[RMDB]
Structure probing data (2A3 and DMS) for a 177-nucleotide construct.
Source: RMDB library M2PK50, as collected in RNAgym.
For DMS, 1,336 sequencing reads were counted.
RNA sequence: GGGAACGACUCGAGUAGAGUCGAAAACUCGGUUAAUUCGUUAACCGAGACUUCAUAAACAUCUUUUCAACACAUAGAUGGUAAAUAUUCAAAGAUGUUCGAAUGCGAUAAACUUCGGUUUAUCGAAGAGCUUAAGAACUUUCGAGUUCUUAAGCUCAAAAGAAACAACAACAACAAC
Reactivity to 2A3 in 0.01 (KOAc 150mM, MgCl2 10mM, bicine 150mM(pH8.5), 24C), signal-to-noise 3, nucleotides 027 to 126: c010u000c000g020g000u010u010a010a020u040u100c140g020u040u020a000a010c000c000g000a010g000a010c010u070u060c040a100u140a110a070a050c010a020u000c000u010u030u090u120c080a060a100c000a010c040a190u190a160g130a260u100g020g010u050a080a100a070u170a040u090u100c050a010a030a000g010a020u000g030u000u040c030g110a120a030u190g060c010g000a010u000a000a030a000c000u040u040c090g090g010u000u000u000a000u000c000g000a050a020
Reactivity to DMS in 0.01 (KOAc 150mM, MgCl2 10mM, bicine 150mM(pH8.5), 24C), signal-to-noise 2, nucleotides 027 to 126: c000u000c000g000g020u000u000a000a010u000u010c110g030u000u000a000a020c000c000g010a000g000a080c070u000u000c070a130u000a160a000a030c000a000u000c000u010u010u010u020c210a120a010c080a040c080a160u010a090g010a150u010g000g010u000a100a070a090u010a070u000u000c130a000a020a060g000a010u000g000u010u000c140g010a060a060u000g020c000g000a020u010a000a000a030c000u000u010c270g010g000u000u000u000a000u000c000g010a050a080